Source information:
Conditions: 150 mM KOAc, 10 mM MgCl2 and 150 mM bicine (pH 8.5), 24 C. This 177-nucleotide RNA was probed chemically with DMS and 2A3.

RNA sequence: GGGAACGACUCGAGUAGAGUCGAAAAUUGUAUGGGGUAAAGCCAAGAAUCAAACGCUAAAAGAUCAAGGAGGUGGUGUGGUCACUCCGCUUACGUUUGCCUUAAUUUUUUUCUGUGGCGCAUUAACUCAAUCGUAAACAUUCGUGUUUACGAUUGAAAAAGAAACAACAACAACAAC
Reactivity to DMS in 0.01 (KOAc 150mM, MgCl2 10mM, bicine 150mM(pH8.5), 24C), signal-to-noise 5, nucleotides 027 to 126: u000u000g010u010a090u010g010g020g010g020u010a080a090a140g020c020c030a070a060g000a060a060u000c070a050a060a080c090g010c120u010a040a050a060a050g010a080u010c080a070a090g010g010a060g010g020u010g010g020u000g020u000g000g010u010c080a080c060u000c050c020g000c050u000u010a060c070g020u000u010u000g010c210c050u000u010a040a010u000u010u010u000u000u000u010c040u010g020u010g010g020c020g000c130a050u000u000a050a110c180
Reactivity to 2A3 in 0.01 (KOAc 150mM, MgCl2 10mM, bicine 150mM(pH8.5), 24C), signal-to-noise 3, nucleotides 027 to 126: u170u130g040u120a110u200g000g010g030g010u020a050a030a000g000c000c030a040a010g050a020a030u060c040a070a030a010c020g000c040u110a130a070a020a010g040a060u120c090a060a070g080g040a040g050g110u070g010g080u100g020u070g050g040u060c010a010c070u000c000c030g010c000u030u050a020c020g040u030u040u040g030c000c000u070u110a180a240u110u130u050u010u000u040u000c050u060g170u100g030g010c030g000c040a080u170u060a060a050c040